RNA sequence: GGGAACGACUCGAGUAGAGUCGAAAAUGCCUUUGCACUCUGUACCAUUUUAGAAAUUCCAAGUGGUUUUCAAGAGCAACCCUAUGAGUAUGGGAUAAAAAGAUAGAAACAGAAAACUGAUGGCACAACUUGCUAGCUUUUUCGAAAGCUAGCAAGUAAAAGAAACAACAACAACAAC
Reactivity to DMS in 0.01 (KOAc 150mM, MgCl2 10mM, bicine 150mM(pH8.5), 24C), signal-to-noise 1, nucleotides 027 to 126: u010g010c020c020u000u000u000g000c110a150c130u000c030u030g010u010a100c050c020a010u030u000u000u000a110g000a130a160a100u000u000c050c010a070a090g040u000g020g000u000u000u030u000c100a120a140g040a130g000c140a070a100c030c000c050u000a140u000g000a060g010u020a130u030g000g000g010a050u000a030a070a040a060a060g010a050u010a050g010a080a010a030c060a080g010a050a040a140a080c140u010g000a050u000g020g000c030a020c140a110
Reactivity to 2A3 in 0.01 (KOAc 150mM, MgCl2 10mM, bicine 150mM(pH8.5), 24C), signal-to-noise 1, nucleotides 027 to 126: u010g010c010c000u060u060u070g020c030a030c080u010c000u030g000u000a000c020c010a020u040u140u030u110a110g070a090a290a150u220u050c070c020a000a060g010u090g050g030u020u030u030u000c060a080a000g020a010g050c010a000a010c000c000c010u060a110u100g070a060g130u140a100u120g050g050g020a010u110a020a110a030a020a000g070a000u100a120g070a000a070a020c070a020g030a000a130a000a020c040u080g020a030u060g090g090c020a030c000a030